[RMDB]
RNA sequence: GGGAACGACUCGAGUAGAGUCGAAAACUCAAUGGAAGCUAUUCUAACAAAUGGAGUUGACAACAUUCAAUUGAUUAAUGAAGAUUUCUAACUUCUAUUUGUAAAUUGUAACUAUUUUUUUUAGUUUAAUAUAGCGUUCAUUCGUGAACGCUAUAUUAAAAGAAACAACAACAACAAC
Reactivity to 2A3 in 0.01 (KOAc 150mM, MgCl2 10mM, bicine 150mM(pH8.5), 24C), signal-to-noise 1, nucleotides 027 to 126: c010u000c020a030a030u030g030g020a050a000g050c020u020a010u060u000c030u100a190a060c000a000a000a000u020g000g020a020g020u000u000g010a040c080a070a020c040a050u020u000c020a040a180u090u220g150a100u170u300a030a080u080g020a030a000g040a080u070u030u000c020u090a040a030c000u090u030c000u090a050u000u000u000g010u000a030a060a040u040u020g010u010a040a000c000u000a090u050u030u030u010u020u010u010u250a020g000u080u010u000
The record gives the reactivity of an RNA of 177 nucleotides to 2A3. 2A3 adducts were read by reverse transcription with SuperScript II with manganese.